[RMDB]
RNA sequence: GGGAACGACUCGAGUAGAGUCGAAAAUCUAUACCGUACUGGUCGAAGGGGACGAUAUGACCGAACCCGUGGCCGACGAAACACGUUCGAUACUUGAUGGUCAUAUUAUUCUGUCACGGAAAUUAGCGUGAGCCACUAUGUUCGCAUAGUGGCUCACAAAAGAAACAACAACAACAAC
Reactivity to 2A3 in 0.01 (KOAc 150mM, MgCl2 10mM, bicine 150mM(pH8.5), 24C), signal-to-noise 1, nucleotides 027 to 126: u050c010u000a050u110a180c040c000g010u030a010c150u150g050g090u090c020g140a210a000g000g000g060g030a010c000g000a020u010a060u110g010a030c100c020g010a100a040c010c000c100g060u020g010g000c010c010g020a020c020g010a120a090a000c100a030c050g030u120u060c080g070a210u030a200c070u030u140g010a050u090g190g040u040c020a000u020a010u000u050a070u080u080c110u020g070u020c010a050c010g020g040a080a070a100u090u050a050g080c050
Reactivity to DMS in 0.01 (KOAc 150mM, MgCl2 10mM, bicine 150mM(pH8.5), 24C), signal-to-noise 2, nucleotides 027 to 126: u010c030u010a150u030a130c020c000g020u030a030c090u000g010g020u010c010g060a160a110g020g010g030g020a100c030g000a040u000a010u000g000a020c060c010g010a120a180c080c000c090g000u020g010g020c080c050g030a030c100g030a080a120a130c160a090c120g000u000u010c090g000a140u000a030c110u010u010g000a090u040g020g000u000c060a010u000a060u000u000a080u000u010c140u000g010u000c080a020c080g000g000a120a080a080u020u020a090g000c270

An RNA of 177 nucleotides, treated with 2A3 and DMS and read out base by base. High 2A3 reactivity points to a flexible backbone, as in loops and unpaired stretches. The reactions ran in a buffer of 150 mM KOAc, 10 mM MgCl2 and 150 mM bicine (pH 8.5), at 24 C. DMS adducts were read by reverse transcription with MarathonRT.